About this RNA
Chemical mapping of a 207-nucleotide RNA with 2A3 and DMS. For 2A3 the reverse transcriptase was SuperScript II with manganese. The DMS profile rests on 3,306 reads. 2A3 is a SHAPE reagent: it acylates the 2'-hydroxyl of flexible nucleotides of all four kinds.

RNA sequence: GGGAACGACUCGAGUAGAGUCGAAAAGGUAUGUUUUUUCCACUUUCCUAGUGGGAAGAGAGGACAAGGCUUAUAAAUGUCAUCUUUAUAAAGCCGGGUAAAACUGAGUCAUUAGAAUCGUCAAAGUUCAUCUGACUAAACAGAUUGCAAAAUACUACCUAAUUACUGGAUUCGUCCAGUAAUUAGGAAAAGAAACAACAACAACAAC
Reactivity to 2A3 in 0.01 (KOAc 150mM, MgCl2 10mM, bicine 150mM(pH8.5), 24C), signal-to-noise 3, nucleotides 027 to 156: g070g000u080a060u130g070u060u090u000u020u000u010c000c000a020c020u090u080u070c030c040u070a030g030u050g030g000g000a000a010g030a000g030a040g050g010a020c020a080a030g000g000c000u010u050a020u010a050a020a060u180g130u110c020a090u070c060u050u020u000a010u010a050a130a050g000c010c050g000g010g010u120a100a100a020a020c030u050g030a000g040u050c030a040u050u110a020g030a080a070u090c030g090u040c120a090a060a060g010u060u050c030a020u000c020u020g040a030c030u090a020a040a050c040a030g050a070u050u090g030c060a060a040a010a060u140a080c010u130a030
Reactivity to DMS in 0.01 (KOAc 150mM, MgCl2 10mM, bicine 150mM(pH8.5), 24C), signal-to-noise 2, nucleotides 027 to 156: g010g010u020a040u000g020u000u000u000u000u010u000c030c010a060c010u010u000u000c110c100u020a180g040u000g020g020g030a030a020g000a100g020a100g020g000a120c040a100a100g000g000c000u000u000a090u000a010a050a020u010g030u030c100a100u010c140u010u000u000a020u000a060a050a070g020c010c020g040g010g020u000a030a060a060a070c080u000g020a130g020u000c020a090u000u000a150g000a060a080u000c060g030u000c120a090a060a130g000u000u000c070a110u000c150u000g010a150c000u010a130a080a210c020a050g030a110u000u000g010c000a020a060a040a080u000a060c060u010a220